Annotation: Chemical mapping of a 207-nucleotide RNA with 2A3 and DMS. For 2A3 the reverse transcriptase was SuperScript II with manganese. For 2A3, 5,076 sequencing reads were counted. For DMS, 4,269 sequencing reads were counted.
[RMDB]
RNA sequence: GGGAACGACUCGAGUAGAGUCGAAAAGCAGUAUCUCGUUAGGCGAGGCUCCUAUACAAACACAGGUUGCUGAUCUGACGACGUCGAGAGACGCCCAAGAUUAGGCCAGGAUAUAUCGAACCAAGGUGAACCUGUCCAGGGUUCGCCCUGGACAGAAGACGUUAAUUCUGUUCGCAGAAUUAACGUCAAAAGAAACAACAACAACAAC
Reactivity to 2A3 in 0.01 (KOAc 150mM, MgCl2 10mM, bicine 150mM(pH8.5), 24C), signal-to-noise 6, nucleotides 027 to 156: g060c040a010g040u090a120u090c050u010c020g050u080u190a100g040g090c040g010a030g010g000c010u020c000c010u110a120u080a210c110a070a190a010c070a010c030a090g030g020u090u160g090c010u010g010a020u000c010u030g010a030c010g010a010c010g020u000c010g020a020g010a000g000a100c000g000c010c000c010a010a000g030a030u040u060a020g020g020c010c010a020g000g060a030u060a020u020a030u180c090g030a030a040c020c040a060a020g090g010u050g050a060a060c010c000u010g000u010c000c000a000g030g000g000u040u040c100g050c000c000c000u000g000g000a010c000a000g020a010a000
Reactivity to DMS in 0.01 (KOAc 150mM, MgCl2 10mM, bicine 150mM(pH8.5), 24C), signal-to-noise 3, nucleotides 027 to 156: g030c100a090g000u000a050u000c020u000c030g010u010u000a100g010g040c000g000a150g010g020c020u000c010c020u000a090u010a100c040a140a180a170c070a110c120a090g020g030u000u000g030c030u000g000a060u000c010u000g010a190c000g010a020c010g030u000c000g010a300g010a300g020a030c000g000c030c040c140a110a070g010a050u010u000a050g000g030c030c000a090g010g010a150u000a050u000a040u000c060g010a060a200c040c020a090a180g010g000u010g010a040a090c040c000u000g010u000c080c020a080g020g000g040u000u010c250g010c000c010c000u020g000g010a030c010a040g010a020a070